[RMDB]
RNA sequence: GGGAACGACUCGAGUAGAGUCGAAAAGAUAUGGACUAACUACCCACCAUGGAGAGGGAUUCGGAAACGAAUCCUCCCCACCUCUUUGAGGUUAGUCCUAAGUCAAAGUGUCCGUUCGCGGACACAACGAAUAAUGAUUCUUCGGAAUCAUUAUUCGAAAAGAAACAACAACAACAAC
Reactivity to DMS in 0.01 (KOAc 150mM, MgCl2 10mM, bicine 150mM(pH8.5), 24C), signal-to-noise 7, nucleotides 027 to 126: g010a100u010a160u000g010g000a020c010u000a000a020c010u000a120c040c030c030a300c200c060a030u000g020g010a020g000a090g020g020g000a010u000u000c000g000g000a080a080a170c010g010a010a000u000c000c000u000c030c020c010c020a300c060c040u000c010u000u000u000g020a130g010g000u000u000a010g000u000c000c000u010a040a110g000u010c120a060a080a110g010u000g010u000c000c000g020u000u010c250g010c000g010g010a010c000a000c010a020a110
Reactivity to 2A3 in 0.01 (KOAc 150mM, MgCl2 10mM, bicine 150mM(pH8.5), 24C), signal-to-noise 5, nucleotides 027 to 126: g080a040u210a150u270g000g010a000c000u020a010a000c000u200a270c020c010c040a020c040c010a070u100g000g010a010g000a020g010g020g000a000u000u010c010g000g050a050a060a040c010g000a010a010u000c000c000u030c010c000c000c000a050c010c010u050c030u100u030u080g040a030g030g000u000u000a000g000u000c010c000u030a100a020g140u130c130a190a080a080g010u010g000u010c020c010g010u050u080c300g010c020g110g000a000c000a000c000a000a000

The record gives the reactivity of an RNA of 177 nucleotides to DMS and 2A3. For DMS the reverse transcriptase was MarathonRT. 2A3 is a SHAPE reagent: it acylates the 2'-hydroxyl of flexible nucleotides of all four kinds. Values are in units of 0.01, from 0 to 300, in steps of 10. For 2A3, 23,495 sequencing reads were counted. The reactions ran in a buffer of 150 mM KOAc, 10 mM MgCl2 and 150 mM bicine (pH 8.5), at 24 C.